Chemical mapping of a 177-nucleotide RNA with DMS and 2A3. Source: RMDB library TTRDEL, as collected in RNAgym. The RNA was probed in 150 mM KOAc, 10 mM MgCl2 and 150 mM bicine (pH 8.5) at 24 C. For 2A3 the reverse transcriptase was SuperScript II with manganese.
RNA sequence: GGGAACGACUCGAGUAGAGUCGAAAAGAUAUGGAAUCUUGUAAAGGCAUCGAUCUCGGAAACGAGGGAGCCUUACACUGGAUUCCUAAGUCAAACAAGAAAGAUCACUUCGGUGAUCUUUCUUGAACCUUCAACAACGGUUCGCCGUUGUUGAAGGAAAAGAAACAACAACAACAAC
Reactivity to DMS in 0.01 (KOAc 150mM, MgCl2 10mM, bicine 150mM(pH8.5), 24C), signal-to-noise 1, nucleotides 027 to 126: g010a010u000a300u000g010g000a000a000u000c030u000u010g010u010a050a050a090g030g010c000a180u000c130g000a110u000c020u000c020g020g000a140a080a210c000g000a040g000g000g000a030g010c000c000u000u000a000c060a070c270u000g010g010a020u000u000c000c000u000a020a110g000u010c010a030a080a280c020a000a000g000a040a030a020g010a010u010c000a000c010u000u000c120g000g020u000g000a000u000c000u000u000u000c000u000u000g010a050a140
Reactivity to 2A3 in 0.01 (KOAc 150mM, MgCl2 10mM, bicine 150mM(pH8.5), 24C), signal-to-noise 1, nucleotides 027 to 126: g030a010u110a050u200g000g000a000a020u000c010u040u040g010u110a130a090a040g030g020c020a160u300c100g120a080u050c090u010c000g020g020a110a080a060c000g000a020g000g020g030a000g000c000c010u020u010a000c040a010c070u090g010g000a020u010u000c000c000u000a140a000g090u030c050a040a080a190c000a000a000g040a010a010a000g010a000u010c000a020c040u190u300c300g020g000u000g000a000u010c000u000u000u000c000u000u010g020a010a000